[RMDB]
Chemical mapping of a 177-nucleotide RNA with 2A3 and DMS. Values cover nucleotides 27 to 126.
RNA sequence: GGGAACGACUCGAGUAGAGUCGAAAAAGAAGCGCGCUAACCGCGCCCUUUGCGAUGCUUGUUACAGGAGAAGUGUCCGGUUCGAUCCCUGCGUGGGUUAUCCACGGCGGAAGCGGCUUGAGUAAUCGCUGAGUUAAAGUUUCGACUUUAACUCAGCAAAAGAAACAACAACAACAAC
Reactivity to 2A3 in 0.01 (KOAc 150mM, MgCl2 10mM, bicine 150mM(pH8.5), 24C), signal-to-noise 6, nucleotides 027 to 126: a000g170a040a020g000c110g000c000g010c140u040a080a010c050c000g010c000g010c000c010c010u090u070u060g020c080g040a040u050g020c030u040u070g030u220u150a090c060a100g030g090a090g090a120a040g010u020g030u050c010c000g040g000u050u080c020g020a080u040c010c000c010u040g010c020g010u070g020g030g010u170u060a070u090c010c000a010c010g010g000c010g000g020a050a030g010c000g000g000c000u040u060g060a050g050u140a070a060u130c090
Reactivity to DMS in 0.01 (KOAc 150mM, MgCl2 10mM, bicine 150mM(pH8.5), 24C), signal-to-noise 4, nucleotides 027 to 126: a070g000a070a130g030c110g020c020g020c100u040a130a110c280c060g020c060g010c010c030c010u010u010u000g020c110g000a070u000g000c030u000u010g000u030u010a090c100a090g000g000a110g010a080a080g010u010g010u000c020c010g000g030u010u010c060g010a080u010c020c000c000u010g010c010g030u000g000g000g000u030u020a070u020c020c020a010c000g020g020c070g000g010a100a070g010c030g010g000c020u000u020g000a160g000u010a050a090u020c140